Structure probing data (DMS and 2A3) for a 177-nucleotide construct. 2A3 adducts were read by reverse transcription with SuperScript II with manganese. It was measured as part of the RMDB libraries RFM100 and RFMREP. Conditions: 150 mM KOAc, 10 mM MgCl2 and 150 mM bicine (pH 8.5), 24 C. For DMS the reverse transcriptase was MarathonRT.
RNA sequence: GGGAACGACUCGAGUAGAGUCGAAAACUGGUGUGUGUUUAGUGGAUUAUCUGAUCAGCACAUGUGUGACAGUGUUGAUCACAAGUCAUUGCCAGCUCUGUUCAUUUUCUUCCCUGGUCUAACUCAACCAGAUUCAUAUAUUCGUAUAUGAAUCUGGAAAAGAAACAACAACAACAAC
Reactivity to DMS in 0.01 (KOAc 150mM, MgCl2 10mM, bicine 150mM(pH8.5), 24C), signal-to-noise 7, nucleotides 027 to 126: c040u000g000g010u000g010u010g010u000g020u010u010u000a090g020u000g010g000a100u010u010a090u020c170u010g000a020u000c010a010g000c010a010c010a090u020g030u010g020u020g010a090c060a060g010u000g000u000u000g010a020u000c020a020c140a060a080g000u000c040a060u010u000g000c040c030a060g000c040u000c040u000g000u000u000c090a070u010u010u010u000c090u000u000c010c010c000u010g000g010u000c050u000a070a090c060u010c080a080a250
Reactivity to 2A3 in 0.01 (KOAc 150mM, MgCl2 10mM, bicine 150mM(pH8.5), 24C), signal-to-noise 9, nucleotides 027 to 126: c020u020g030g010u020g010u010g000u010g030u060u080u150a160g030u080g080g050a100u080u050a080u190c050u040g010a000u010c000a010g020c000a060c100a210u050g060u020g080u130g110a040c020a040g000u000g000u010u010g000a000u010c010a000c020a020a020g030u030c020a040u010u120g020c010c010a020g000c020u000c020u040g070u050u030c040a080u070u060u070u030c010u010u030c010c010c000u020g080g000u030c050u060a050a050c030u030c090a010a060